[RMDB]
RNA sequence: GGGAACGACUCGAGUAGAGUCGAAAAUAACGGACUAGGAAACUCGAUCUUUUAAGUGGUAAUCCUAGCGAAUCCACGGCGAGGAAACUAGGACACUAACCAUGUGAUCCCGGACGCAAGAAGAAAACGUAGAGAUGUUGUUCGCAACAUCUCUACGAAAAGAAACAACAACAACAAC
Reactivity to 2A3 in 0.01 (KOAc 150mM, MgCl2 10mM, bicine 150mM(pH8.5), 24C), signal-to-noise 2, nucleotides 027 to 126: u110a040a010c090g040g010a050c030u010a030g000g050a140a130a080c010u020c010g060a130u060c170u030u280u140u230a180a020g000u000g000g020u040a040a090u020c010c010u030a070g040c040g060a010a030u000c000c000a040c140g080g000c050g000a010g040g050a120a000a000c000u000a020g000g000a000c000a000c030u070a100a070c020c010a050u080g080u030g060a120u000c010c000c000g000g010a060c050g040c040a080a020g050a060a040g050a000a150a000a010
Reactivity to DMS in 0.01 (KOAc 150mM, MgCl2 10mM, bicine 150mM(pH8.5), 24C), signal-to-noise 2, nucleotides 027 to 126: u000a080a160c120g020g010a080c050u010a020g000g010a030a180a190c030u000c070g010a060u000c040u020u000u010u060a100a190g030u000g020g000u000a110a130u000c030c010u010a060g010c100g020a190a100u000c010c010a070c060g010g000c060g000a100g000g010a100a150a140c010u000a010g020g000a010c030a030c110u000a050a070c090c100a040u010g000u000g010a030u000c010c000c010g020g010a070c130g000c060a060a050g000a030a090g000a070a030a060a120